[RMDB]
RNA sequence: GGGAACGACUCGAGUAGAGUCGAAAAAGUUCAUCAUCAACGCCGGCGGCUUGGCGUAGCGUGCGAUGGAGGGCGUGGCUGCCGGUGUGGGCGGAGCCACGGUUACCGGAGGAGGCGGAGCUUGGCACUCCUACUAUGCCUUCGGGCAUAGUAGGAGAAAAGAAACAACAACAACAAC
Reactivity to 2A3 in 0.01 (KOAc 150mM, MgCl2 10mM, bicine 150mM(pH8.5), 24C), signal-to-noise 2, nucleotides 027 to 126: a000g060u050u040c010a090u030c010a010u030c020a040a050c010g030c030c000g060g000c010g000g040c040u070u140g110g040c050g000u000a020g070c020g020u070g000c060g060a060u130g110g050a090g040g030g000c020g010u020g010g000c000u100g040c010c000g030g020u020g020u050g010g020g000c030g000g030a020g000c010c010a010c000g010g090u070u070a070c030c010g040g000a020g040g010a010g010g030c060g030g010a030g020c030u010u050g030g010c020a020
Reactivity to DMS in 0.01 (KOAc 150mM, MgCl2 10mM, bicine 150mM(pH8.5), 24C), signal-to-noise 2, nucleotides 027 to 126: a050g010u000u000c030a090u010c080a070u000c070a160a060c030g010c020c010g000g020c040g010g000c030u000u000g010g020c040g010u000a100g000c050g030u010g010c060g000a080u000g000g000a130g040g000g020c030g010u000g000g000c010u010g020c010c020g010g020u010g000u010g020g010g020c030g000g010a090g000c030c040a040c060g000g000u000u000a060c060c050g010g010a120g000g020a080g010g010c090g000g000a110g000c060u000u010g010g000c120a200